[RMDB]
RNA sequence: GGGAACGACUCGAGUAGAGUCGAAAAAUUGCACAGGAUUGUGCAUGGUGGACAAUGUUUUGUACAGCAGUGAAUGCCUCUUCUUCAGAAGCAUUCUUGAUUGGUGUUAAUUAUUUGGGUGCAAGUGAAAAGGUUAAGGUUAGUGGAAAAACGCUGCGACCGUAUACUCCUUCGGGAGUAUACGGUCAAAAGAAACAACAACAACAAC
Reactivity to 2A3 in 0.01 (KOAc 150mM, MgCl2 10mM, bicine 150mM(pH8.5), 24C), signal-to-noise 1, nucleotides 027 to 156: a000u050u040g060c010a010c000a000g280g130a280u130u070g010u020g040c030a010u010g050g010u020g010g070a020c040a100a080u100g080u080u100u060u150g100u170a020c040a000g030c010a010g040u010g150a060a000u000g000c000c000u000c010u140u000c030u140u100c160a060g000a030a010g040c000a000u060u040c080u030u040g160a160u010u090g060g010u000g000u030u190a040a050u100u040a030u090u010u090g020g000g000u040g030c000a090a000g000u010g040a020a020a000a090g050g030u040u020a040a000g060g010u060u080a070g010u070g000g010a160a060a000a000a000c050g000c040u100g010c030